[RMDB]
RNA sequence: GGGAACGACUCGAGUAGAGUCGAAAACCGUGACAUUGCGAAAGCAAGGCUGGCGGUAGGUAGUCCUGGGCGGCGACAGCCUUGGACUGCGGCGUAAAGGUGUACCUGGGGCCGUUAAACUUAUCGUGAAAGGCAACUUGGUUCGCCAAGUUGCCAACAAUGUCAGAGUGUUCGCACUCUGACAUUGAAAAGAAACAACAACAACAAC
Reactivity to 2A3 in 0.01 (KOAc 150mM, MgCl2 10mM, bicine 150mM(pH8.5), 24C), signal-to-noise 2, nucleotides 027 to 156: c000c020g000u080g070a090c110a110u020u050g000c020g060a150a060a030g010c020a020a030g050g010c090u100g080g000c030g010g000u010a000g000g040u020a010g010u000c020c020u050g000g000g010c060g020g040c080g060a060c090a050g000c000c000u010u020g000g000a000c000u000g000c020g020g000c000g020u070a040a030a010g070g000u180g090u300a240c000c010u020g000g000g120g000c040c020g020u040u090a130a100a000c000u020u020a010u040c020g000u020g200a140a060a080g020g000c010a000a000c000u000u000g020g010u010u070c120g070c050c000a000a000g000u020u010g000c000c000a000a000
Reactivity to DMS in 0.01 (KOAc 150mM, MgCl2 10mM, bicine 150mM(pH8.5), 24C), signal-to-noise 1, nucleotides 027 to 156: c000c010g040u000g000a170c020a050u000u000g000c040g000a170a090a300g000c040a020a020g020g020c040u000g020g060c030g040g010u000a040g020g020u000a040g000u000c010c000u000g020g010g000c000g000g140c160g030a110c110a180g050c020c000u000u010g000g000a030c000u010g020c010g040g060c050g000u000a070a210a070g000g000u020g000u020a060c020c030u010g010g050g000g030c020c020g010u000u000a040a150a070c070u010u000a050u000c040g040u040g020a030a100a120g030g030c000a000a010c020u010u000g000g000u000u030c300g010c000c010a000a030g000u010u000g000c020c030a000a000
Annotation:
The record gives the reactivity of an RNA of 207 nucleotides to 2A3 and DMS. The RNA was probed in 150 mM KOAc, 10 mM MgCl2 and 150 mM bicine (pH 8.5) at 24 C.